Chemical mapping of a 177-nucleotide RNA with 2A3. The RNA was probed in 150 mM KOAc, 10 mM MgCl2 and 150 mM bicine (pH 8.5) at 24 C. For 2A3 the reverse transcriptase was SuperScript II with manganese. It was measured as part of the RMDB library OK1LIB. The 2A3 profile rests on 508 reads.
[RMDB]
RNA sequence: GGGAACGACUCGAGUAGAGUCGAAAAGGCGGUCCUUUGACGAGUGGUUUGCGCCAAGGUGAGGGCUGGAUUGUGAGGCAAUCCCUUGGCCAGUUGCUGCUCUAUUUGGACGACUUGACUGGCCACCGCCAGCGAGUCCGUUCGCGGACUCGCUGGCAAAAGAAACAACAACAACAAC
Reactivity to 2A3 in 0.01 (KOAc 150mM, MgCl2 10mM, bicine 150mM(pH8.5), 24C), signal-to-noise 1, nucleotides 027 to 126: g050g000c050g020g120u100c010c000u040u050u000g010a080c010g000a000g070u000g040g130u000u030u160g110c170g000c010c010a000a000g000g090u300g010a020g000g010g060c000u110g000g070a250u100u230g080u050g220a160g080g040c070a070a000u000c000c000c000u000u000g000g000c000c000a000g000u080u080g000c000u000g000c000u000c000u000a070u000u000u100g000g000a000c000g000a000c000u110u100g050a100c020u070g040g010c000c000a000c010c020